[RMDB]
RNA sequence: GGGAACGACUCGAGUAGAGUCGAAAAUCCUACUACAACUAUUCCUAAUUAUAACCUUCACCGCCACCGAACUAAUCCUAUUCUAUAUCCUAUUCGAAGCAACACUAGUACCCACACUAAUUAUCAUCACACGCUGAGGAAACCAAACAGAACGACUGCGUAUCUUGUAGUUCGCUACAAGAUACGCAAAAGAAACAACAACAACAAC
Reactivity to 2A3 in 0.01 (KOAc 150mM, MgCl2 10mM, bicine 150mM(pH8.5), 24C), signal-to-noise 2, nucleotides 027 to 156: u000c000c020u020a010c020u080a030c040a160a050c040u100a100u070u150c000c020u050a050a190u090u130a120u110a130a160c020c000u030u010c000a040c040c050g010c000c010a040c020c020g020a030a030c010u000a040a030u050c000c000u020a050u070u040c010u070a060u020a080u110c030c000u020a070u120u030c050g040a040a000g030c020a030a030c040a020c070u030a020g020u060a050c020c010c010a000c020a000c060u010a020a110u050u070a050u090c030a020u020c030a020c000a020c080g000c000u040g010a010g000g050a030a010a000c070c020a080a060a020c040a020g030a030a010c020g000a050c100u040